[RMDB]
RNA sequence: GGGAACGACUCGAGUAGAGUCGAAAAAUCGUCAGAUGAUGCUCACAAGCAUAUCGCGUUUGCAGCAGUUCGUCGGAACCCAGGCCUUCCAUGUAACAGCAGCAGAGGAAUUGCUCAACAAGGUACACCGGACGUGAUAAUUCGUUAUCACGUCCGGAAAAGAAACAACAACAACAAC
Reactivity to DMS in 0.01 (KOAc 150mM, MgCl2 10mM, bicine 150mM(pH8.5), 24C), signal-to-noise 2, nucleotides 027 to 126: a050u010c080g000u000c120a080g000a030u020g020a020u000g000c020u010c300a050c300a050a030g000c010a020u000a090u010c050g010c110g020u020u000u000g000c070a090g010c010a070g010u030u000c010g020u020c080g010g010a050a110c060c000c080a090g010g020c010c050u020u010c000c010a030u020g000u000a070a070c120a070g020c040a060g000c050a080g000a110g030g020a050a070u000u000g020c030u030c060a040a030c190a050a040g000g000u000a050c260a170
Reactivity to 2A3 in 0.01 (KOAc 150mM, MgCl2 10mM, bicine 150mM(pH8.5), 24C), signal-to-noise 1, nucleotides 027 to 126: a000u040c000g050u050c050a060g010a010u140g010a000u040g060c070u080c020a110c040a110a000g010c010a030u080a040u060c030g020c000g020u030u070u080g130c040a050g000c020a040g020u080u000c010g120u000c000g070g050a030a040c000c000c000a080g040g040c010c020u060u010c000c000a080u120g030u130a100a070c020a040g040c010a000g000c010a000g040a050g070g040a120a150u030u040g000c020u040c020a010a070c000a000a040g180g040u130a020c070a020